[RMDB]
RNA sequence: GGGAACGACUCGAGUAGAGUCGAAAAGCGAAAAUCGGACGGUGGCUGCAAGUCGCAUCGCAAAACCGCGGCAAGUGGAGUUAGCGAGAGGAGGCUGGGUUUUGGCUUCCUUAAGCAAUAGGUCACCAUAAGAGGAUUCGCUUCGGCGAAUCCUCAACUGAGUAUUUAUCUUCGGAUAAAUACUCAGAAAAGAAACAACAACAACAAC
Reactivity to DMS in 0.01 (KOAc 150mM, MgCl2 10mM, bicine 150mM(pH8.5), 24C), signal-to-noise 1, nucleotides 027 to 156: g030c020g000a060a020a090a060u000c050g000g020a110c060g000g010u000g040g050c020u030g000c080a030a230g000u000c030g050c020a180u000c080g100c060a040a070a110a180c050c070g010c000g050g000c060a070a160g060u010g020g010a160g000u010u000a120g010c000g000a300g020a050g060g050a020g010g000c000u000g020g030g010u000u010u010u000g020g020c000u000u000c010c020u000u040a000a300g040c030a050a090u000a100g000g020u000c000a030c020c000a120u000a030a090g000a030g040g000a050u000u000c000g070c040u000u010c300g120g030c000g020a020a000u000c000c000u000c000a000a020
Reactivity to 2A3 in 0.01 (KOAc 150mM, MgCl2 10mM, bicine 150mM(pH8.5), 24C), signal-to-noise 3, nucleotides 027 to 156: g050c010g050a040a000a000a110u170c050g080g040a030c110g040g000u020g010g000c020u030g020c060a090a020g040u030c040g000c020a050u050c030g020c090a040a010a050a030c030c040g010c010g060g000c110a160a090g030u060g040g070a130g030u110u120a040g020c000g000a040g000a000g030g000a000g010g000c020u060g030g190g120u080u100u140u250g020g000c000u010u000c000c000u000u020a030a010g000c000a010a010u060a070g000g000u000c010a000c010c010a010u070a060a030g010a000g000g000a000u000u000c010g000c000u030u020c090g070g000c000g000a000a000u000c000c000u000c000a000a000